RNA sequence: GGGAACGACUCGAGUAGAGUCGAAAACGCGACACCUGCGCGGCCGCCGUGCCGACGCGCAGAUCUCGCUCACCCAGCUGUCGGCGCUGGCGACGUUGGCGCGUGAUGGUGCGAUGACGCCGGGCGAGCCUGGCAUAAAUUUCGAUUUAUGCCAGGCAAAAGAAACAACAACAACAAC
Reactivity to 2A3 in 0.01 (KOAc 150mM, MgCl2 10mM, bicine 150mM(pH8.5), 24C), signal-to-noise 4, nucleotides 027 to 126: c060g020c020g020a020c020a010c000c020u020g010c030g010c000g040g010c100c020g050c050c080g150u140g020c050c030g060a050c020g000c000g000c000a010g000a050u020c020u010c040g010c030u040c020a110c000c010c010a020g040c060u160g090u170c040g090g030c040g000c140u080g010g000c000g010a020c030g040u050u080g110g020c000g000c010g030u020g030a100u120g040g030u020g010c020g000a010u050g020a010c020g020c010c030g040g010g000c020g000a020
Reactivity to DMS in 0.01 (KOAc 150mM, MgCl2 10mM, bicine 150mM(pH8.5), 24C), signal-to-noise 5, nucleotides 027 to 126: c140g010c040g010a070c090a020c040c020u000g020c010g010c000g000g010c070c010g030c050c130g010u000g010c050c010g000a030c010g000c030g010c050a050g000a040u000c200u000c040g010c030u000c110a170c030c000c020a190g010c080u010g010u000c020g020g010c020g010c030u010g010g000c010g010a060c060g010u000u000g010g000c020g020c000g020u010g010a090u000g010g020u000g000c030g000a040u010g010a090c050g010c000c010g010g010g010c050g010a130

Chemical mapping of a 177-nucleotide RNA with 2A3 and DMS. The data come from the RNA Mapping Database (RMDB), library OK2TRN. 2A3 is a SHAPE reagent: it acylates the 2'-hydroxyl of flexible nucleotides of all four kinds.